[RMDB]
RNA sequence: GGGAACGACUCGAGUAGAGUCGAAAAGGGGUCAGAUUGAGCAACAAUGAUGCCGAAGGGAGAGCUGAAGCCUCCACGGCUCGACGAUCUUCGGUUGAGUUGCAAGAUGAGUCUGACGGAGGCACCCAAAAACCUUCUGUCUUCGGACAGAAGGUAAGAAUGUUCUAGGCUUCGGCCUAGAACAUUCAAAAGAAACAACAACAACAAC
Reactivity to 2A3 in 0.01 (KOAc 150mM, MgCl2 10mM, bicine 150mM(pH8.5), 24C), signal-to-noise 1, nucleotides 027 to 156: g030g000g000g000u030c000a000g020a080u060u110g090a050g090c000a000a030c030a050a300u070g020a010u000g010c000c000g000a000a000g030g010g010a000g000a000g000c000u010g020a130a000g020c010c020u010c010c020a030c010g020g040c000u000c000g080a100c010g010a000u000c030u000u000c020g040g000u000u010g020a010g000u010u050g000c000a000a040g050a040u200g020a000g210u060c030u050g000a040c050g000g000a000g000g000c010a040c010c000c000a030a060a060a090a050c000c000u000u020c000u000g000u000c000u050u040c200g080g000a000c000a000g000a000a020g000g000u020a000a030
Background:
An RNA of 207 nucleotides, treated with 2A3 and read out base by base. Source: RMDB library RNAMAK, as collected in RNAgym. For 2A3, 1,012 sequencing reads were counted. The RNA was probed in 150 mM KOAc, 10 mM MgCl2 and 150 mM bicine (pH 8.5) at 24 C.